RNA sequence: GGGAACGACUCGAGUAGAGUCGAAAAGAUUGUUACAAUAAGCACUGUGGUAAAGAUAGAAAGACUUAUGCGAUGGAAGCGCAAGCCGUUGCUAAAGGUGCUGGAAUGGAUCACCUGUUCGGUAUCAUCAUGAGCCUUUACCAAGGAUACGAUAGUCAGAUACUUCUGCUUUCGAGCAGAAGUAUCUAAAAGAAACAACAACAACAAC
Reactivity to 2A3 in 0.01 (KOAc 150mM, MgCl2 10mM, bicine 150mM(pH8.5), 24C), signal-to-noise 3, nucleotides 027 to 156: g060a120u070u090g040u080u120a060c050a050a050u130a230a040g060c070a050c070u090g010u070g110g000u050a030a040a010g050a070u130a100g120a070a130a020g030a020c020u030u060a030u040g000c050g040a050u070g070g020a060a040g050c020g000c080a010a010g020c000c020g020u030u050g000c030u090a080a030a020g010g000u010g000c010u010g020g030a070a060u080g000g040a050u120c040a040c110c000u030g090u070u050c020g000g020u000a000u100c020a000u040c010a030u100g050a010g020c000c000u000u020u010a020c000c000a010a040g020g000a060u050a090c070g010a060u020a050g110u110c040
Reactivity to DMS in 0.01 (KOAc 150mM, MgCl2 10mM, bicine 150mM(pH8.5), 24C), signal-to-noise 2, nucleotides 027 to 156: g030a110u020u010g000u040u000a110c040a090a170u000a060a120g000c050a090c010u000g000u010g020g000u000a030a010a080g010a110u000a160g020a110a080a090g010a050c020u000u000a030u010g030c020g000a140u010g030g010a130a130g010c010g000c020a120a040g010c040c000g040u000u000g010c070u000a070a060a040g000g040u010g010c070u000g000g010a040a080u000g010g000a200u000c090a050c070c020u000g000u000u010c060g020g020u020a030u010c020a150u000c140a170u010g010a090g000c040c040u000u000u000a010c010c010a050a090g010g000a180u010a030c050g010a120u000a090g030u000c120